[RMDB]
The record gives the reactivity of an RNA of 170 nucleotides to 2A3 and DMS. The DMS profile rests on 14,444 reads. The 2A3 profile rests on 5,796 reads. Values cover nucleotides 27 to 129. Conditions: 150 mM KOAc, 10 mM MgCl2 and 150 mM bicine (pH 8.5), 24 C. Source: RMDB library 15KLIB, as collected in RNAgym.

RNA sequence: GGGAACGACUCGAGUAGAGUCGAAAAUGAAACUCUUGGAAGCGGAAGAAGGAAGGCGGAGAAAAGGAGCGGGCCCUCCGAUCCGAGGGGCCCGACGCCCCUGAUCUGGAGAGCACUCCGGCCCGAAUAACUAACGGCUUCGGCCGUUAGAAAAGAAACAACAACAACAAC
Reactivity to 2A3 in 0.01 (KOAc 150mM, MgCl2 10mM, bicine 150mM(pH8.5), 24C), signal-to-noise 2, nucleotides 027 to 129: u130g010a070a000a010c050u040c050u080u090g000g010a020a000g050c070g050g000a040a040g000a000a000g030g000a010a010g030g000c030g000g000a020g010a020a080a000a000g020g000a050g010c020g010g020g010c000c000c000u030c020c020g040a050u040c030c020g060a060g000g000g000g000c010c000c000g030a080c090g000c030c000c000c000u030g000a020u010c010u040g000g000a010g000a000g010c020a030c040u010c030c000g020g000c000c000c030g070a080a000u130a040a040
Reactivity to DMS in 0.01 (KOAc 150mM, MgCl2 10mM, bicine 150mM(pH8.5), 24C), signal-to-noise 4, nucleotides 027 to 129: u050g020a130a080a040c030u030c030u060u000g000g000a090a120g000c180g050g030a000a000g020a020a020g000g000a080a040g010g020c060g000g040a030g020a070a020a040a100g090g010a050g020c100g060g000g000c010c040c000u020c070c030g010a070u010c090c300g000a000g000g000g000g000c000c070c110g040a020c150g010c000c000c000c000u020g000a040u020c030u090g050g020a030g020a060g000c100a170c100u010c020c030g000g000c030c030c010g000a060a080u000a080a130